An RNA of 177 nucleotides, treated with DMS and read out base by base. The RNA was probed in 150 mM KOAc, 10 mM MgCl2 and 150 mM bicine (pH 8.5) at 24 C. DMS adducts were read by reverse transcription with MarathonRT.
RNA sequence: GGGAACGACUCGAGUAGAGUCGAAAAGAUAUGGAUUACAUCAACGAUCCCGUAGAGCGAUAAGCUGGACUCGGAAACGAGUCACAGCUUUUGACGCUUGAAGGGAUCGUUGAUGUAAUCCUAAGUCGUCUGUAUUCAAGUUCGCUUGAAUACAGACAAAAGAAACAACAACAACAAC
Reactivity to DMS in 0.01 (KOAc 150mM, MgCl2 10mM, bicine 150mM(pH8.5), 24C), signal-to-noise 2, nucleotides 027 to 126: g000a110u010a300u000g000g000a010u000u000a000c000a000u000c000a000a000c010g000a020u000c000c000c000g010u000a300g000a000g020c000g010a230u000a000a020g050c000u000g000g000a040c000u000c000g000g010a140a120a200c010g020a020g010u000c010a000c000a000g010c000u010u000u000u010g020a190c090g000c000u010u000g010a300a300g000g000g000a000u000c000g000u000u000g000a000u000g010u000a000a000u000c000c000u000a050a090g010u010c080